Notes
This 207-nucleotide RNA was probed chemically with 2A3. It was measured as part of the RMDB library OK3TST. The RNA was probed in 150 mM KOAc, 10 mM MgCl2 and 150 mM bicine (pH 8.5) at 24 C.
[RMDB]
RNA sequence: GGGAACGACUCGAGUAGAGUCGAAAAAGAAGAUAUGAGCCUUUGACAAAAAGAUCCACCAUGAUGCCCAGUUCCAGCAGCCUGGCUGAGCCAUCUGGUUGAGCUCUUGGGAAGAUAAACUUCUCUACAUCAAUGUCAACAAGAAGAUAUGAGCCUAGGUAUGGCUCAUGUUCGCAUGAGCCAUACCAAAAGAAACAACAACAACAAC
Reactivity to 2A3 in 0.01 (KOAc 150mM, MgCl2 10mM, bicine 150mM(pH8.5), 24C), signal-to-noise 1, nucleotides 027 to 156: a000g090a060a000g000a040u080a150u180g050a070g010c000c010u040u070u040g000a050c160a020a120a020a090a000g000a130u020c020c040a020c000c000a030u240g030a000u050g040c000c000c000a010g020u090u090c010c000a010g110c020a060g080c070c010u020g000g000c000u020g020a000g040c020c000a000u010c010u030g030g000u010u020g000a020g020c050u020c000u060u020g000g000g000a010a010g000a060u110a110a190a150c010u010u000c010u080c000u020a040c000a170u160c050a020a150u060g000u020c000a000a030c010a030a130g120a130a020g020a050u080a030u100g030a000g030c050c060u080a060